[RMDB]
RNA sequence: GGGAACGACUCGAGUAGAGUCGAAAAUCCACGUCCUUCGGGACGUGGAAAAUACGGGACGGGAGCCGAAGAAAUCCCGAAGCGCAGUGCAGCGCAGCACAAAAAGGUGAGUCUUCGGACUCACCAACAAUCCGUACUUGUUCGCAAGUACGGAUUGAAAAGAAACAACAACAACAAC
Reactivity to DMS in 0.01 (KOAc 150mM, MgCl2 10mM, bicine 150mM(pH8.5), 24C), signal-to-noise 2, nucleotides 027 to 126: u010c000c000a000c000g000u000c000c000u020u010c170g040g000g000a010c000g070u000g000g000a000a000a040a060u030a130c010g020g000g030a230c020g000g000g000a070g000c030c000g030a090a150g010a120a070a080u000c010c000c020g010a090a150g030c020g020c060a090g020u010g010c090a100g030c030g000c050a090g000c100a090c160a070a100a060a080a040g000g000u000g000a010g000u000c000u000u000c200g000g000a010c000u000c000a020c010c000a010a060
Reactivity to 2A3 in 0.01 (KOAc 150mM, MgCl2 10mM, bicine 150mM(pH8.5), 24C), signal-to-noise 2, nucleotides 027 to 126: u000c000c000a000c000g020u040c020c010u030u150c210g050g010g000a000c010g000u000g000g010a000a000a000a000u080a000c010g000g000g080a020c020g020g020g010a010g120c040c000g050a120a050g150a200a100a000u010c040c000c000g010a090a030g040c040g000c060a050g050u140g090c020a070g000c080g010c080a030g080c060a010c010a040a130a020a020a020g030g000u000g000a000g000u000c000u020u080c190g030g000a000c000u040c000a000c000c010a000a000